An RNA of 207 nucleotides, treated with 2A3 and read out base by base.
[RMDB]
RNA sequence: GGGAACGACUCGAGUAGAGUCGAAAAUGUACCCUUCGGGGUACAAAAAAAGCGUACUACGAGAAGUUAGCCGAUGUAUCUAAUUCCCAAAUAGGAAUUAGCCGAGCAUCGGAACUACUAACCUCGUAUCGCAAAAACCGUGAGUUCGCUCACGGAAGCCCUCUUACACUUUCGAGUGUAAGAGGGCAAAAGAAACAACAACAACAAC
Reactivity to 2A3 in 0.01 (KOAc 150mM, MgCl2 10mM, bicine 150mM(pH8.5), 24C), signal-to-noise 1, nucleotides 027 to 156: u010g000u000a020c000c000c000u020u130c280g090g000g010g000u020a040c010a010a100a000a000a000a000a000g030c050g000u140a030c020u000a020c020g000a000g020a300a070g000u000u000a010g020c000c000g000a000u000g000u030a080u000c000u010a000a000u000u080c030c000c060a110a280a110u210a060g000g020a000a000u050u000a000g040c220c180g130a100g110c000a010u010c000g030g060a000a000c000u100a050c000u000a020a020c010c010u000c000g000u000a000u240c010g000c010a050a050a040a050a050c010c000g020u000g010a010g000u160u280c300g020c140u000c000a000c020g000g000a020a020
Source: RMDB library RNAMAK, as collected in RNAgym. The RNA was probed in 150 mM KOAc, 10 mM MgCl2 and 150 mM bicine (pH 8.5) at 24 C.